The record gives the reactivity of an RNA of 207 nucleotides to 2A3 and DMS.
[RMDB]
RNA sequence: GGGAACGACUCGAGUAGAGUCGAAAAGGCAAGUUGUAUUAAUUGAUGAUGAUGCCGAUGCUUUAGACACAGCUAACAAACGCUUGAGUGAGGUGAUUCAGGAUGACUAAUCGGGUGAAUUUGACGGAUGUUGGCACCGGGUUGAAUCAGUAUCAACCUACGAUACUUUGUUCGCAAAGUAUCGUAGAAAAGAAACAACAACAACAAC
Reactivity to 2A3 in 0.01 (KOAc 150mM, MgCl2 10mM, bicine 150mM(pH8.5), 24C), signal-to-noise 4, nucleotides 027 to 156: g070g060c110a050a070g010u020u030g050u100a140u090u120a260a090u080u070g080a050u030g010a040u030g010a020u050g050c020c010g000a010u040g020c010u080u080u130a020g060a040c020a000c000a090g030c010u110a150a050c050a130a090a010c050g040c020u040u070g020a010g020u070g030a030g040g020u040g000a050u070u050c040a030g020g020a030u030g020a020c050u100a080a060u110c050g040g000g010u030g050a080a130u060u040u050g040a020c030g030g000a020u080g010u050u030g020g000c030a000c010c030g050g000g000u000u020g040a040a040u060c040a030g020u070a030u090c030a000a050c010
Reactivity to DMS in 0.01 (KOAc 150mM, MgCl2 10mM, bicine 150mM(pH8.5), 24C), signal-to-noise 2, nucleotides 027 to 156: g020g000c040a030a170g020u000u010g060u000a100u010u000a100a130u020u000g020a060u000g000a070u010g010a150u010g020c030c010g010a080u000g010c060u010u000u000a110g010a160c080a070c070a090g020c040u000a120a130c090a070a100a060c080g030c080u010u000g030a060g030u010g030a120g010g040u010g020a090u000u010c070a060g000g020a070u010g010a050c090u020a090a110u000c020g010g010g000u000g020a030a110u000u020u010g000a070c070g000g020a080u000g020u010u000g030g050c030a070c040c030g000g000g030u000u010g000a040a050u000c030a100g010u010a100u010c060a030a080c100

2A3 adducts were read by reverse transcription with SuperScript II with manganese.